Structure probing data (2A3) for a 307-nucleotide construct. It was measured as part of the RMDB library POS240. For 2A3 the reverse transcriptase was SuperScript II with manganese. Conditions: 150 mM KOAc, 10 mM MgCl2 and 150 mM bicine (pH 8.5), 24 C.
[RMDB]
RNA sequence: GGGAACGACUCGAGUAGAGUCGAAAACAGCAGCGGUGACGCUGCUGAACUAAUGGACGUGAGUCCAUUAGAAGAGGAUGCUUCGGCAUCCUCAGGUAGUAUCGUGAGAUACUACCAACUAGCUGGCUACGGCCAGCUAGAAGCGUGCGGUGACGCACGCAGGCCGUGACUACGGUCACGGCCAACGCACUCUUCGGAGUGCGAACAUGGUCCGUUCGCGGACCAUGAAGGAGAGGUUCUAGUUAUACCCUCUAUAAAAAACUAAUACCGUACCAUUCGUGGUACGGAAAAGAAACAACAACAACAAC
Reactivity to 2A3 in 0.01 (KOAc 150mM, MgCl2 10mM, bicine 150mM(pH8.5), 24C), signal-to-noise 4, nucleotides 027 to 266: c000a000g000c010a000g000c010g020g090u140g080a060c010g000c000u000g000c010u010g000a000a000c000u000a000a000u000g000g000a000c010g080u130g130a050g020u010c000c000a000u000u000a000g000a080a020g000a000g010g000a000u030g000c020u080u110c270g130g000c000a000u000c000c000u000c000a000g000g000u000a000g010u000a000u020c030g030u060g050a060g000a010u000a000c000u010a000c000c000a000a010c000u000a000g000c000u000g010g000c010u010a040c300g150g000c000c000a000g000c000u000a000g000a030a010g000c000g000u000g000c000g000g040u040g040a020c010g000c000a000c000g000c000a010g000g000c000c010g000u000g000a000c000u030a040c300g100g000u000c000a000c000g020g010c000c000a000a000c000g000c000a000c010u000c010u050u080c180g140g000a000g000u000g000c010g000a050a010c000a000u000g000g000u000c000c000g030u030u090c240g060c020g130g000a000c000c000a000u010g010a030a070g170g120a090g000a020g010g000u020u020c020u030a010g010u020u040a130u160a290c020c120c020u000c130u050a120u300a150a020a010a000a000a010c040u070a040a050u120a190

For 2A3, 6,524 sequencing reads were counted.